RNA sequence: GGGAACGACUCGAGUAGAGUCGAAAAUGAUAAAUUAUCCAAAAUAGUUCGAUCGUUGCAUAAAUUGAUGUGCUAGUUCGAGGCGCAUUAAGGUGCUCGAUAAAUUGCGUAAGUCACGAACCUCUCGCCGACUUCGCAGUUCUUGUGAUUAUCGAGAGCCUAUAUAGUCAUUCGUGACUAUAUAGGCAAAAGAAACAACAACAACAAC
Reactivity to 2A3 in 0.01 (KOAc 150mM, MgCl2 10mM, bicine 150mM(pH8.5), 24C), signal-to-noise 4, nucleotides 027 to 156: u080g030a030u150a120a230a060u190u110a080u070c020c030a030a100a010a110u120a070g080u080u090c050g030a040u030c030g040u140u100g000c030a010u050a110a270a110u120u060g010a020u020g000u010g020c030u040a060g100u150u110c050g080a080g040g000c030g000c010a010u000u040a010a010g080g030u050g010c000u020c000g010a000u040a050a070a010u050u040g010c030g070u150a000a030g000u010c010a000c030g000a060a100c060c080u130c030u010c030g090c130c070g030a020c010u020u010c000g010c000a000g000u020u040c020u110u090g100u050g060a100u040u060a060u090c040g070a030g010a010
Reactivity to DMS in 0.01 (KOAc 150mM, MgCl2 10mM, bicine 150mM(pH8.5), 24C), signal-to-noise 2, nucleotides 027 to 156: u010g040a090u000a100a060a080u010u010a080u000c050c160a100a110a150a240u000a060g010u000u010c040g010a130u000c040g030u000u000g010c030a080u010a110a100a190u000u010g000a010u000g020u020g000c010u000a080g020u000u010c130g020a250g000g020c040g040c020a000u000u000a030a040g010g000u000g030c020u010c000g030a070u000a020a010a030u000u000g010c000g020u010a020a020g010u000c020a040c000g000a040a190c220c280u010c140u000c020g020c020c010g000a020c000u000u000c010g000c000a020g000u000u000c090u020u000g020u000g020a140u010u010a050u000c010g010a040g000a290
Background
Source: RMDB library OK3TST, as collected in RNAgym. Chemical mapping of a 207-nucleotide RNA with 2A3 and DMS. The DMS profile rests on 4,060 reads.